RNA sequence: GGGAACGACUCGAGUAGAGUCGAAAAUCUACAAAAAAGAAAAUUGAAUCUAAUUAGGCUAAUUUAGGGGGUAGAGAAUAUGAGAUAGGGAAUAUGGAUUCUUUCGUAUCUCGAUUCAGUUUUUGAAUACCUCUACAGUAUUCGUACUGUAGAGGUAAAAAGAAACAACAACAACAAC
Reactivity to 2A3 in 0.01 (KOAc 150mM, MgCl2 10mM, bicine 150mM(pH8.5), 24C), signal-to-noise 5, nucleotides 027 to 126: u030c020u120a260c190a040a110a010a040a000a040g130a030a050a050a030u060u080g020a020a030u030c030u090a060a160u160u080a140g060g040c030u060a050a170u070u100u240a110g000g020g000g010g010u100a040g030a020g040a220a010u160a220u300g040a010g020a010u010a010g080g000g050a000a020u110a130u140g160g070a100u100u020c030u030u040u020c040g140u030a010u010c010u000c030g000a000u010u020c030a000g020u000u000u000u000u000g020a070a020
Reactivity to DMS in 0.01 (KOAc 150mM, MgCl2 10mM, bicine 150mM(pH8.5), 24C), signal-to-noise 4, nucleotides 027 to 126: u010c030u010a080c090a000a040a100a100a090a130g000a030a040a050a070u020u020g010a080a060u020c010u010a060a110u030u020a100g000g000c040u010a030a070u000u010u010a070g000g010g000g010g020u010a030g010a080g010a030a040u010a030u020g010a020g000a020u000a030g030g000g000a010a020u010a150u030g020g000a090u010u010c060u000u010u010c020g000u000a010u000c010u000c010g010a040u010u000c040a050g010u000u010u010u000u020g010a130a160

Record summary: Chemical mapping of a 177-nucleotide RNA with 2A3 and DMS. For 2A3 the reverse transcriptase was SuperScript II with manganese. Reactivities are given for positions 27 through 126. For DMS, 8,450 sequencing reads were counted. Conditions: 150 mM KOAc, 10 mM MgCl2 and 150 mM bicine (pH 8.5), 24 C. The data come from the RNA Mapping Database (RMDB), library OK1LIB.